[RMDB]
RNA sequence: GGGAACGACUCGAGUAGAGUCGAAAAAACAGGGAAACUACAUUGUUGGAAAUCCCCAAAAACUUUGACAUUAUGAAGGAAAGCUCCAGGUUCCUUCUAACUGGAUCUGUUUUCCGGAUCACCUGGGGAACGGAACUAUAUUCGUAUAGUUCCGUUCAAAAGAAACAACAACAACAAC
Reactivity to 2A3 in 0.01 (KOAc 150mM, MgCl2 10mM, bicine 150mM(pH8.5), 24C), signal-to-noise 2, nucleotides 027 to 126: a000a000c050a020g000g010g020a020a050a010c030u130a030c050a130u110u180g090u080u060g020g030a080a120a140u060c010c010c000c010a000a120a050a020a080c070u110u100u110g000a000c000a020u070u150a080u300g000a000a010g010g000a010a040a030g020c010u000c010c000a020g020g030u010u010c010c000u030u000c010u000a030a010c080u060g080g000a070u050c010u030g030u040u040u050u020c010c010g050g000a070u080c040a050c050c030u020g010g010g000
Reactivity to DMS in 0.01 (KOAc 150mM, MgCl2 10mM, bicine 150mM(pH8.5), 24C), signal-to-noise 4, nucleotides 027 to 126: a040a050c080a090g000g000g000a060a040a100c090u010a130c060a060u000u000g010u000u000g010g020a140a120a140u010c030c000c000c080a060a070a070a070a030c070u000u000u000g000a180c040a070u000u000a050u010g000a030a020g000g000a020a030a110g000c030u000c020c040a030g000g000u000u000c000c010u000u000c010u000a040a050c210u000g000g000a130u010c090u000g000u000u000u010u000c040c030g020g000a080u020c150a080c010c000u000g010g000g000
The record gives the reactivity of an RNA of 177 nucleotides to 2A3 and DMS. Reactivities are given for positions 27 through 126. The 2A3 profile rests on 2,084 reads. For 2A3 the reverse transcriptase was SuperScript II with manganese. The DMS profile rests on 4,131 reads. The data come from the RNA Mapping Database (RMDB), library OK2TRN.